[RMDB]
RNA sequence: GGGAACGACUCGAGUAGAGUCGAAAAACGACAUCAAGCUGGCUCUGGAGGUCUCCUUUGAAGUUUGCUGAGUGGAUUGUCAGUGGGAGGCUGAUAUUUACAUGUAGAAGCACACAAGUGUUACUGCUAAUUGUGGUAAAUCAGGCUGGCCAGCCUGGAUCACGGCGAGAUUCGUCUCGCCGUGAUCAAAAGAAACAACAACAACAAC
Reactivity to 2A3 in 0.01 (KOAc 150mM, MgCl2 10mM, bicine 150mM(pH8.5), 24C), signal-to-noise 1, nucleotides 027 to 156: a000c100g100a030c060a120u150c100a060a000g020c000u010g010g000c040u090c070u280g100g000a020g000g030u010c030u040c060c000u150u030u080g130a110a080g030u100u190u120g010c050u070g010a070g110u130g000g090a080u130u050g070u050c050a030g050u030g050g010g000a010g010g000c030u050g020a030u000a030u080u040u020a010c010a010u090g010u040a010g000a090a000g030c010a020c020a000c030a090a190g000u010g000u090u060a090c010u010g000c000u010a050a170u210u300g020u090g070g000u070a000a050a000u030c000a010g150g000c060u030g020g040c030c000a000g000c020c000u030g020
An RNA of 207 nucleotides, treated with 2A3 and read out base by base. The reactions ran in a buffer of 150 mM KOAc, 10 mM MgCl2 and 150 mM bicine (pH 8.5), at 24 C. The data come from the RNA Mapping Database (RMDB), library OK3TST.